[RMDB]
Record summary: The record gives the reactivity of an RNA of 177 nucleotides to DMS. Values cover nucleotides 27 to 126. DMS adducts were read by reverse transcription with MarathonRT. Conditions: 150 mM KOAc, 10 mM MgCl2 and 150 mM bicine (pH 8.5), 24 C. High DMS reactivity at an A or C suggests that its Watson-Crick edge is free.
RNA sequence: GGGAACGACUCGAGUAGAGUCGAAAAUGUCACACAGUAGCGAGGGAUGCAAUUAAUUGCAUCUACACCAAGCUCAAGGCUUGGAUUUCGACUAGUGUCGAGUCGUUCCCACUCGGUACGCCCACAACAUUUCUAAGUCCUUCGGGACUUAGAAAUGAAAAGAAACAACAACAACAAC
Reactivity to DMS in 0.01 (KOAc 150mM, MgCl2 10mM, bicine 150mM(pH8.5), 24C), signal-to-noise 1, nucleotides 027 to 126: u000g010u000c060a080c030a130c180a180g030u000a070g010c010g000a080g000g020g000a010u000g000c000a020a040u000u000a070a020u000u000g020c000a010u000c010u000a050c060a120c000c000a000a020g030c010u010c100a110a100g020g000c000u000u000g000g000a190u000u000u000c000g000a020c000u010a080g000u000g010u000c000g000a010g020u000c000g020u000u030c000c000c000a010c010u010c040g000g000u000a020c010g010c020c000c000a080c170a050a090